[RMDB]
RNA sequence: GGGAACGACUCGAGUAGAGUCGAAAACAGCUGUUCCUGGCCUAGGGAGGAGCCAGAACCCCCAACCAAUAGUGUUGAGGAUGGUGAUGCGAGCCUUGGGUCCUCCCUAACGUGGCUACUGUGUUACAGAAGCCAUAUCCAAGGCAGUGUCAUCUGACUAAUGAUGGACUUUCGAGUCCAUCAUUAGAAAAGAAACAACAACAACAAC
Reactivity to 2A3 in 0.01 (KOAc 150mM, MgCl2 10mM, bicine 150mM(pH8.5), 24C), signal-to-noise 2, nucleotides 027 to 156: c040a030g100c100u150g040u070u060c030c000u010g010g000c000c010u020a040g000g000g010a000g020g000a010g000c000c000a010g010a060a050c050c020c030c000c010a010a060c030c060a110a170u160a200g080u060g000u050u020g050a060g060g050a060u110g000g000u000g000a000u020g040c000g030a060g020c010c000u010u000g000g000g010u010c000c010u000c050c000c000u020a040a020c040g000u020g000g000c000u060a130c000u050g020u040g140u290u200a040c010a000g030a040a000g000c000c000a010u010a000u020c000c000a000a000g010g000c020a000g000u000g010u000c010a010u010c010u020g060a080
Reactivity to DMS in 0.01 (KOAc 150mM, MgCl2 10mM, bicine 150mM(pH8.5), 24C), signal-to-noise 2, nucleotides 027 to 156: c060a120g050c010u000g060u000u000c110c000u000g040g000c000c020u020a060g030g000g010a090g060g000a150g000c000c030a070g010a110a100c030c020c000c030c030a020a050c000c070a170a190u030a080g030u000g000u000u000g020a080g040g010a100u000g020g030u010g010a080u000g000c040g020a210g040c010c020u020u040g000g010g000u000c000c000u000c030c020c000u000a020a010c060g000u000g000g000c000u000a200c060u000g020u000g040u020u010a090c020a080g000a210a040g010c000c020a020u000a040u000c000c000a040a040g020g010c000a240g000u000g010u000c010a100u000c000u020g000a300
Background
The record gives the reactivity of an RNA of 207 nucleotides to 2A3 and DMS. It was measured as part of the RMDB library OK3TST. For DMS, 3,144 sequencing reads were counted. The RNA was probed in 150 mM KOAc, 10 mM MgCl2 and 150 mM bicine (pH 8.5) at 24 C.